[RMDB]
The data come from the RNA Mapping Database (RMDB), library OK3TST. An RNA of 207 nucleotides, treated with 2A3 and read out base by base.
RNA sequence: GGGAACGACUCGAGUAGAGUCGAAAACCAUUCAUGACUUUUGAGGAAUGGGGUGGAAUUUGGGGACUGAAUUUAUGAAGAGGCAGCAUGGUAGAGAGGAAAGUCCUGACAUCAACCUCUGGGCGGGGCGUUGAUUGGCAUCUGUGGAAUGCCCACCUACAAAUCCAAUCUUCGGAUUGGAUUUGUAAAAAGAAACAACAACAACAAC
Reactivity to 2A3 in 0.01 (KOAc 150mM, MgCl2 10mM, bicine 150mM(pH8.5), 24C), signal-to-noise 1, nucleotides 027 to 156: c010c000a030u020u030c050a050u130g190a160c050u230u120u130u220g040a050g000g070a050a040u160g030g000g050g000u020g000g070a110a070u050u010u130g040g010g000g000a010c050u000g090a020a120u080u250u190a070u160g000a010a080g000a010g020g020c000a000g030c000a060u060g000g000u030a000g030a000g000a020g110g080a010a010a000g020u020c000c000u040g040a010c020a020u080c000a040a020c000c010u000c040u040g000g000g080c140g010g000g000g000c030g010u000u030g020a130u000u090g000g020c000a040u100c030u050g070u040g080g010a120a010u020g010c000c000c000a000c000c020

For 2A3 the reverse transcriptase was SuperScript II with manganese.